Conditions: 150 mM KOAc, 10 mM MgCl2 and 150 mM bicine (pH 8.5), 24 C. This 207-nucleotide RNA was probed chemically with 2A3. For 2A3, 798 sequencing reads were counted. Values cover nucleotides 27 to 156. It was measured as part of the RMDB library OK3TST.

RNA sequence: GGGAACGACUCGAGUAGAGUCGAAAAACCGCGAAGGCCGACGCGGAGAUCCUCGACCAGGCGAAGGCCCUCGCGGCCGAGAUCGGCCCGGACGCCGCCGCCGACCUGGACGGCCAGAAGGACGCCUCGGGCGCCCUCGCCCGGGUCAAAAACCUCGACUAACUAUACAAUUCGUUGUAUAGUUAGUAAAAGAAACAACAACAACAAC
Reactivity to 2A3 in 0.01 (KOAc 150mM, MgCl2 10mM, bicine 150mM(pH8.5), 24C), signal-to-noise 2, nucleotides 027 to 156: a010c030c010g000c010g000a030a040g000g000c010c010g000a020c040g030c040g110g010a040g030a120u150c050c070u070c140g090a130c090c010a100g070g110c020g010a030a040g040g010c020c000c010u010c000g010c000g010g000c030c000g010a050g000a030u110c050g020g000c030c000c020g000g000a040c070g020c060c050g030c020c010g000c000c020g100a220c040c030u090g080g000a110c020g010g060c010c000a130g100a250a050g100g000a000c000g010c030c070u130c100g140g100g000c020g000c000c010c000u020c000g040c010c010c010g000g000g020u040c030a080a030a040a010a000c030c030u040c010g010